[RMDB]
RNA sequence: GGGAACGACUCGAGUAGAGUCGAAAACAAACUCCAAACCUACGGACGCCGUCGACGCAGGGAAUCCGGUGUGCGGGGUAAGCCUGUGCACCGUGAGGGAGACAACCCAGAGUUAGGUUAAGGUCCCCAUUAUAUGGUAAUUCGUUACCAUAUAAUGAAAAGAAACAACAACAACAAC
Reactivity to 2A3 in 0.01 (KOAc 150mM, MgCl2 10mM, bicine 150mM(pH8.5), 24C), signal-to-noise 9, nucleotides 027 to 126: c020a010a050a010c020u020c020c020a070a070a070c010c010u030a020c020g050g050a060c040g120c130c040g090u110c040g020a050c020g010c040a040g010g010g040a030a050u010c010c000g010g000u000g000u000g010c010g000g000g000g050u150a070a050g300c000c000u010g000u010g010c000a000c000c020g050u130g010a020g010g020g000a060g030a030c050a040a080c010c000c010a010g010a010g060u070u100a070g050g050u030u060a050a030g060g040u020c000c000c000
Reactivity to DMS in 0.01 (KOAc 150mM, MgCl2 10mM, bicine 150mM(pH8.5), 24C), signal-to-noise 9, nucleotides 027 to 126: c100a080a060a060c040u010c010c040a080a090a240c020c010u000a040c030g000g000a080c060g020c070c080g010u000c030g010a080c030g000c040a030g000g000g010a120a070u000c020c000g000g000u000g020u000g000c000g000g000g000g010u030a100a140g000c000c000u000g010u000g010c000a010c000c000g010u020g010a030g000g000g010a130g010a120c210a080a100c010c000c010a190g000a060g000u000u010a080g010g010u000u010a100a110g010g000u000c000c000c010